An RNA of 177 nucleotides, treated with DMS and 2A3 and read out base by base. DMS adducts were read by reverse transcription with MarathonRT. For 2A3, 6,102 sequencing reads were counted. 2A3 adducts were read by reverse transcription with SuperScript II with manganese.
RNA sequence: GGGAACGACUCGAGUAGAGUCGAAAAGAUAUGGACAAGCUUUGAUCAUAUGGUCCAUGAAGCUCGGAAACGAGGGUGGACUUUAUGGGAGCUUGUCCUAAGUCAAACCUCUUGUUCGCAAGAGGAACACAUUUUGGUAGUUCGCUACCAAAAUGUGAAAAGAAACAACAACAACAAC
Reactivity to DMS in 0.01 (KOAc 150mM, MgCl2 10mM, bicine 150mM(pH8.5), 24C), signal-to-noise 3, nucleotides 027 to 126: g010a030u000a300u000g010g000a010c000a030a010g000c000u000u000u010g010a130u010c020a030u000a020u000g010g010u000c000c010a000u000g010a150a140g030c000u010c000g000g000a080a100a180c010g010a020g020g010g020u000g000g000a010c000u010u010u000a010u000g020g000g010a010g000c000u000u000g010u000c000c000u000a000a050g010u000c020a120a110a180c010c000u000c000u000u000g000u000u010c200g000c000a000a000g000a010g010g010a050a120
Reactivity to 2A3 in 0.01 (KOAc 150mM, MgCl2 10mM, bicine 150mM(pH8.5), 24C), signal-to-noise 3, nucleotides 027 to 126: g000a010u050a050u120g000g000a000c020a030a000g010c010u180u200u170g060a080u180c010a000u040a040u130g000g000u020c010c010a000u060g140a130a040g170c010u010c010g020g050a070a050a050c010g000a020g050g110g000u010g000g010a010c000u030u080u070a050u070g030g000g010a010g020c000u000u000g000u000c000c000u000a010a000g000u000c010a040a050a170c000c000u000c010u010u010g050u090u110c300g040c150a000a000g000a010g020g030a080a010